Structure probing data (2A3 and DMS) for a 207-nucleotide construct. Conditions: 150 mM KOAc, 10 mM MgCl2 and 150 mM bicine (pH 8.5), 24 C. The DMS profile rests on 4,043 reads.
RNA sequence: GGGAACGACUCGAGUAGAGUCGAAAAUUCUGAGUUUUGUAUUGUUAAACUGUGUCUGGAAACUAAACUUUAUAAUGUGUUACAUUUUAGGUCAGAAGACAUGUCUUCAUCUACAUGGCAUCUUUCCUUACCUCUAUGUGCCAUACGAUGGUUAUGGCACCUACGGAGGUUUCGACCUCCGUAGGUGAAAAGAAACAACAACAACAAC
Reactivity to 2A3 in 0.01 (KOAc 150mM, MgCl2 10mM, bicine 150mM(pH8.5), 24C), signal-to-noise 1, nucleotides 027 to 156: u120u020c010u160g050a090g090u060u000u110u140g060u020a030u100u000g000u000u130a080a150a040c080u060g000u030g020u120c060u100g130g080a000a080a050c030u060a110a050a070c010u060u220u180a240u160a170a130u130g020u020g020u070u130a030c000a040u070u060u130u090a030g020g000u050c020a020g080a000a000g000a020c100a070u090g060u000c050u060u070c040a230u060c050u100a050c010a090u110g000g010c040a090u040c010u010u050u060c010c050u040u050a060c000c060u090c000u090a130u060g050u020g020c000c000a000u000a020c040g110a090u090g050g000u080u050a060u030g000g000
Reactivity to DMS in 0.01 (KOAc 150mM, MgCl2 10mM, bicine 150mM(pH8.5), 24C), signal-to-noise 2, nucleotides 027 to 156: u000u000c020u010g010a130g010u000u000u000u000g020u000a150u010u000g000u010u000a090a060a130c040u010g020u000g030u010c010u020g020g000a180a040a080c070u000a050a060a100c050u000u010u000a080u000a090a030u010g040u010g020u010u000a060c030a050u000u000u000u010a030g030g000u000c070a110g010a110a140g000a050c020a020u010g020u010c070u000u000c090a080u010c050u000a050c080a060u000g000g000c030a110u000c090u010u010u000c000c020u000u000a060c080c040u000c070u000a100u000g040u010g010c010c000a020u000a020c080g010a110u000g030g020u000u000a030u000g000g030